Source: RMDB library OK2TST, as collected in RNAgym. An RNA of 177 nucleotides, treated with DMS and 2A3 and read out base by base. The reactions ran in a buffer of 150 mM KOAc, 10 mM MgCl2 and 150 mM bicine (pH 8.5), at 24 C. For DMS, 4,183 sequencing reads were counted.
[RMDB]
RNA sequence: GGGAACGACUCGAGUAGAGUCGAAAAAUCCUAAUCUUUAUUAGUCAGCGGUAGCACUGACUGUGCAUGGACUGGGAUGUUUAAGGUUCCAAUUCAAUAGGUGCACAACAAAGGGACUUUUUAUUAGCGAAUGUUAGAGAUUCGUCUCUAACAUUCGAAAAGAAACAACAACAACAAC
Reactivity to DMS in 0.01 (KOAc 150mM, MgCl2 10mM, bicine 150mM(pH8.5), 24C), signal-to-noise 4, nucleotides 027 to 126: a080u000c000c000u010a070a070u010c040u000u000u000a140u020u010a060g010u000c010a000g030c050g010g010u010a130g020c080a110c000u000g000a020c010u010g010u000g010c050a070u010g020g000a030c050u000g000g000g000a020u000g000u010u010u000a150a140g020g010u010u000c000c010a020a050u000u000c050a110a130u010a090g010g010u000g010c020a030c040a060a080c190a040a080a060g000g010g020a110c110u010u000u010u010u000a090u030u020a120g000
Reactivity to 2A3 in 0.01 (KOAc 150mM, MgCl2 10mM, bicine 150mM(pH8.5), 24C), signal-to-noise 5, nucleotides 027 to 126: a000u000c020c000u020a060a060u040c030u050u220u100a170u100u090a090g010u000c010a010g000c050g270g090u200a020g060c070a010c070u010g000a000c010u010g010u000g000c020a030u070g030g030a020c030u010g010g010g020a030u030g170u080u240u220a120a030g160g000u020u010c020c000a010a020u050u020c030a070a080u070a260g200g000u030g020c000a000c010a060a070c040a020a050a030g040g020g040a040c030u150u150u070u060u090a200u060u150a050g050